[RMDB]
RNA sequence: GGGAACGACUCGAGUAGAGUCGAAAACUUAACGCGUUCGCGCGUUAAGAAACAACAUAAACAUCGAGUUGACGAUGUCACAAAUACCGUCAGUGUAGACGGAAAGCAUUCGCUUCGGCGAAUGCAAGUCACUACUUUAGUUCGCUAAAGUAGUGACAAAAGAAACAACAACAACAAC
Reactivity to DMS in 0.01 (KOAc 150mM, MgCl2 10mM, bicine 150mM(pH8.5), 24C), signal-to-noise 8, nucleotides 027 to 126: c010u000u000a000a000c000g020c000g030u000u020c200g020c000g030c000g010u000u000a000a000g010a130a080a070c130a070a060c100a070u010a130a120a040c010a000u000c000g020a210g010u010u010g000a140c030g010a010u000g000u000c140a080c180a080a050a080u010a110c010c000g000u000c000a140g020u010g010u010a090g000a020c000g000g000a050a040a090g000c000a010u000u000c000g010c000u000u010c170g020g000c000g010a010a000u000g000c010a030a040
Reactivity to 2A3 in 0.01 (KOAc 150mM, MgCl2 10mM, bicine 150mM(pH8.5), 24C), signal-to-noise 9, nucleotides 027 to 126: c000u000u000a000a000c000g020c010g020u030u060c190g000c000g000c000g100u000u010a000a000g000a020a050a000c040a020a010c010a080u210a110a190a010c000a010u010c010g020a080g130u080u080g220a110c010g000a020u020g020u050c010a060c030a110a150a020u170a130c000c000g010u010c010a090g140u070g170u300a060g020a010c000g000g000a050a060a000g000c000a000u000u000c000g000c010u030u090c240g100g000c000g000a000a000u000g000c000a000a000
The record gives the reactivity of an RNA of 177 nucleotides to DMS and 2A3. The RNA was probed in 150 mM KOAc, 10 mM MgCl2 and 150 mM bicine (pH 8.5) at 24 C. For 2A3, 31,725 sequencing reads were counted. As a SHAPE reagent, 2A3 marks flexible, mostly unpaired nucleotides at the ribose 2'-OH. For DMS, 14,151 sequencing reads were counted.